Source: RMDB library OK3TST, as collected in RNAgym. Structure probing data (DMS and 2A3) for a 207-nucleotide construct. The reactions ran in a buffer of 150 mM KOAc, 10 mM MgCl2 and 150 mM bicine (pH 8.5), at 24 C. For DMS the reverse transcriptase was MarathonRT.
[RMDB]
RNA sequence: GGGAACGACUCGAGUAGAGUCGAAAAUGCAGAAUAGCACCUGGCACCUCUCACCACCACUGAAAAGGAUGGAAUUUUAUACACCUCUUUUUCCUAGGUUCUCUCUAGCAGUUACCAAGGGACCAUCGGAGGUACUUAUUGUGGCUGUUUACAAAAGAAACACCUUUAAGUUCGCUUAAAGGUGUUUAAAAGAAACAACAACAACAAC
Reactivity to DMS in 0.01 (KOAc 150mM, MgCl2 10mM, bicine 150mM(pH8.5), 24C), signal-to-noise 1, nucleotides 027 to 156: u010g010c000a120g020a110a130u000a120g020c020a070c010c010u020g030g000c000a090c010c000u000c000u000c020a120c040c020a100c020c050a100c070u010g000a050a020a040a050g030g000a030u000g020g000a100a080u000u020u000u000a150u000a110c040a120c020c000u000c000u010u000u000u010u000c040c070u000a100g010g000u000u000c050u000c030u020c060u000a000g040c020a120g050u000u000a140c060c000a070a120g020g000g010a090c020c040a110u000c170g030g000a150g000g020u000a010c050u010u010a050u000u000g000u000g020g070c010u000g010u000u000u000a120c100a000a060a120a180g000
Reactivity to 2A3 in 0.01 (KOAc 150mM, MgCl2 10mM, bicine 150mM(pH8.5), 24C), signal-to-noise 2, nucleotides 027 to 156: u050g020c020a030g040a260a090u100a130g040c010a010c010c000u010g030g000c010a040c100c010u000c020u020c020a040c040c000a010c010c000a000c050u100g010a000a000a060a080g010g040a010u110g020g030a020a040u060u120u090u120a150u130a070c090a040c010c000u040c010u020u050u010u040u050c000c030u010a090g010g000u060u010c070u020c000u010c020u030a060g050c050a010g040u080u040a000c020c040a020a070g040g000g000a020c050c020a080u140c060g060g050a060g040g020u000a040c010u080u150a110u080u070g000u000g000g000c010u000g000u030u060u080a100c080a010a060a230a000g210

The DMS profile rests on 2,616 reads. For 2A3, 1,041 sequencing reads were counted.